Notes:
Structure probing data (DMS) for a 177-nucleotide construct. The RNA was probed in 150 mM KOAc, 10 mM MgCl2 and 150 mM bicine (pH 8.5) at 24 C. Reactivities are given for positions 27 through 126.

[RMDB]
RNA sequence: GGGAACGACUCGAGUAGAGUCGAAAAGAUAUGGAUCCUAGUACUCGCUACAGAGGUCGGAAACGACUCCCCACCUGUAGAACUACGAGGACCGGAUCCUAAGUCAAAACCCAUGUUCGCAUGGGAAUCAUCAUAUGUCCUUCGGGACAUAUGAUGAAAAAGAAACAACAACAACAAC
Reactivity to DMS in 0.01 (KOAc 150mM, MgCl2 10mM, bicine 150mM(pH8.5), 24C), signal-to-noise 3, nucleotides 027 to 126: g000a080u000a300u000g020g010a000u000c010c000u000a050g010u000a140c010u000c010g000c000u000a020c000a030g000a160g010g010u000c000g000g010a180a080a170c000g010a050c000u000c030c020c010c010a300c030c010u030g000u000a010g000a090a060c190u020a300c010g010a000g000g000a050c300c210g020g000a010u000c000c000u000a010a060g000u000c070a050a040a090a120c000c000c000a030u000g010u000u040c130g010c010a010u000g000g000g000a060a080